[RMDB]
RNA sequence: GGGAACGACUCGAGUAGAGUCGAAAAAGAACUCAUCUGGAUGCAGCGAUAUAUGUUGAAAAUGAUAUAGAUUUCGAGCCUCCACCCAAGAAUCGGGAGACGGAGCUGUUUAUGCGAUUUGUCACCACACGUCUGAGAAAUUCGUUUCUCAGACGUGAAAAGAAACAACAACAACAAC
Reactivity to DMS in 0.01 (KOAc 150mM, MgCl2 10mM, bicine 150mM(pH8.5), 24C), signal-to-noise 2, nucleotides 027 to 126: a030g000a150a110c050u000c110a070u010c040u030g030g010a080u010g000c020a060g000c040g000a100u000a080u000a050u000g020u000u000g000a050a060a060a110u010g000a020u010a090u000a060g000a200u000u020u000c050g010a120g010c060c020u000c010c030a120c030c030c020a070a090g010a110a070u030c160g000g000g000a170g010a050c160g000g000a100g010c050u000g020u000u010u010a020u000g000c050g000a090u000u000u000g020u010c050a110c040c040a230
Reactivity to 2A3 in 0.01 (KOAc 150mM, MgCl2 10mM, bicine 150mM(pH8.5), 24C), signal-to-noise 2, nucleotides 027 to 126: a000g040a100a040c030u020c050a060u040c070u050g020g000a030u010g010c050a030g060c070g050a020u020a000u000a000u170g060u100u050g130a200a180a080a050u160g060a020u030a030u040a090g120a060u000u170u050c020g030a020g000c030c000u000c000c020a040c050c010c000a040a070g140a080a090u170c080g000g050g000a170g030a060c060g000g030a000g020c010u010g010u150u140u040a120u110g020c000g030a030u090u010u110g030u040c030a060c060c010a010